RNA sequence: GGGAACGACUCGAGUAGAGUCGAAAAAAUCAAUGCCUCACUGCCUUUUACCUUCUUUUAGGUUAGUUGCAAUGUUGACACAGACAUUUAGAAGAUGGUAUGUCUGAAGGGACUUAUGUUUAGGCACGUGGAACCUUAUGUUCGCAUAAGGUUCCACAAAAGAAACAACAACAACAAC
Reactivity to DMS in 0.01 (KOAc 150mM, MgCl2 10mM, bicine 150mM(pH8.5), 24C), signal-to-noise 2, nucleotides 027 to 126: a080a010u040c100a120a130u020g000c000c020u000c160a050c060u000g010c050c000u000u000u010u010a030c010c010u000u000c060u000u000u010u010a050g000g020u000u010a100g040u000u000g060c050a080a150u010g000u000u000g010a090c060a060c120a190g000a030c140a040u000u000u000a080g010a050a030g000a040u000g000g000u000a020u020g000u030c090u000g030a080a060g020g000g000a060c040u010u010a050u010g000u000u000u020a030g010g000c020a030c280
Reactivity to 2A3 in 0.01 (KOAc 150mM, MgCl2 10mM, bicine 150mM(pH8.5), 24C), signal-to-noise 1, nucleotides 027 to 126: a000a040u190c100a030a060u100g040c010c000u060c070a040c000u030g000c000c000u050u100u080u110a010c010c000u050u040c040u030u040u010u060a020g020g000u000u030a040g010u050u060g070c040a100a300u280g070u170u070g110a030c010a000c000a040g110a070c000a030u000u010u070a040g000a060a000g000a010u070g000g040u030a040u040g100u000c060u070g080a070a070g040g000g040a010c000u230u170a080u260g130u000u040u020a010g010g020c000a010c010
Overview:
Structure probing data (DMS and 2A3) for a 177-nucleotide construct. Source: RMDB library OK2TRN, as collected in RNAgym. Conditions: 150 mM KOAc, 10 mM MgCl2 and 150 mM bicine (pH 8.5), 24 C. As a SHAPE reagent, 2A3 marks flexible, mostly unpaired nucleotides at the ribose 2'-OH. The 2A3 profile rests on 920 reads. Reactivities are given for positions 27 through 126.